Structure probing data (2A3 and DMS) for a 207-nucleotide construct. Conditions: 150 mM KOAc, 10 mM MgCl2 and 150 mM bicine (pH 8.5), 24 C. For 2A3 the reverse transcriptase was SuperScript II with manganese.
RNA sequence: GGGAACGACUCGAGUAGAGUCGAAAAAGUUUAGAACGCUGGGAAAUCUGGGAGAUGAGGGAGAGCUCUGAAGCGCGCACGGAGCUCGAAGAACUCAUUCUCCUAAAGAUUUCCUGUGCUGAAGCGCGCACGGCAACCGAAAGGUGCGGAGAACUAAUCUAAUGAUAUUGUUCGCAAUAUCAUUAGAAAAAGAAACAACAACAACAAC
Reactivity to 2A3 in 0.01 (KOAc 150mM, MgCl2 10mM, bicine 150mM(pH8.5), 24C), signal-to-noise 2, nucleotides 027 to 156: a010g020u060u030u040a060g010a090a020c010g000c000u000g000g000g000a010a000a000u010c000u060g110g010g010a010g000a000u000g000a000g010g000g000a020g000a000g010c000u010c000u020g050a160a040g000c000g000c000g000c000a000c010g010g010a020g000c030u010c010g040a200a010g000a000a000c000u000c000a000u300u110c010u000c020c020u040a020a030a010g000a000u000u000u000c000c000u000g000u000g000c000u000g030a100a030g000c000g000c000g000c000a010c000g000g000c010a010a010c000c000g040a100a030a020g000g020u000g000c000g020g020a100g010a020a010c030u060a090a060
Reactivity to DMS in 0.01 (KOAc 150mM, MgCl2 10mM, bicine 150mM(pH8.5), 24C), signal-to-noise 2, nucleotides 027 to 156: a090g000u000u000u020a090g000a120a110c050g020c020u010g040g010g010a040a020a020u010c010u000g020g020g030a030g000a070u010g000a040g020g020g000a120g000a020g020c000u000c010u010g020a040a070g020c020g040c000g000c000a300c030g020g000a040g020c010u020c000g010a040a110g010a090a280c000u000c000a040u000u000c000u000c000c000u000a010a030a040g000a020u000u000u000c000c000u000g020u000g000c000u010g000a050a070g010c050g000c020g010c000a170c020g000g030c020a020a110c040c000g010a110a070a200g010g020u000g000c050g000g000a110g000a060a080c170u020a100a300